Record summary
This 177-nucleotide RNA was probed chemically with 2A3 and DMS. For 2A3 the reverse transcriptase was SuperScript II with manganese. It was measured as part of the RMDB library RFM100.
RNA sequence: GGGAACGACUCGAGUAGAGUCGAAAAUCUGGUUAAUGGGUUAUCCAGCUCCCUUGCUUCUCUCCUCUCCCACUUAUCUUUUGAACUUUUUUCAGCCAAAGAUUUUUACCCAAAAACGAGCCUGAAGCCCCUUGUUAAGUUUCGACUUAACAAGGGGAAAAGAAACAACAACAACAAC
Reactivity to 2A3 in 0.01 (KOAc 150mM, MgCl2 10mM, bicine 150mM(pH8.5), 24C), signal-to-noise 4, nucleotides 027 to 126: u040c020u040g000g040u080u100a150a100u150g020g000g060u070u090a040u070c000c000a020g010c010u040c000c000c010u010u060g020c030u040u020c020u010c010u020c020c000u010c010u010c000c030c010a030c040u100u080a070u100c050u000u070u030u060g070a060a080c040u030u030u060u040u140u160c050a030g010c020c000a070a050a010g040a040u020u020u000u060u170a080c000c000c000a020a080a000a020a030c070g010a020g020c010c020u010g030a040a030g010
Reactivity to DMS in 0.01 (KOAc 150mM, MgCl2 10mM, bicine 150mM(pH8.5), 24C), signal-to-noise 1, nucleotides 027 to 126: u020c020u000g000g000u020u020a040a160u010g000g010g000u000u040a010u050c030c000a000g000c160u000c020c000c000u010u040g000c070u000u020c040u000c020u000c000c040u010c030u000c010c050c020a080c080u000u030a010u000c020u020u000u030u000g010a020a050c090u070u000u000u000u000u000c050a000g000c070c020a080a110a040g000a060u000u000u040u030u000a130c020c000c020a070a080a020a060a020c060g000a090g000c050c020u010g020a030a170g000

The RNA was probed in 150 mM KOAc, 10 mM MgCl2 and 150 mM bicine (pH 8.5) at 24 C.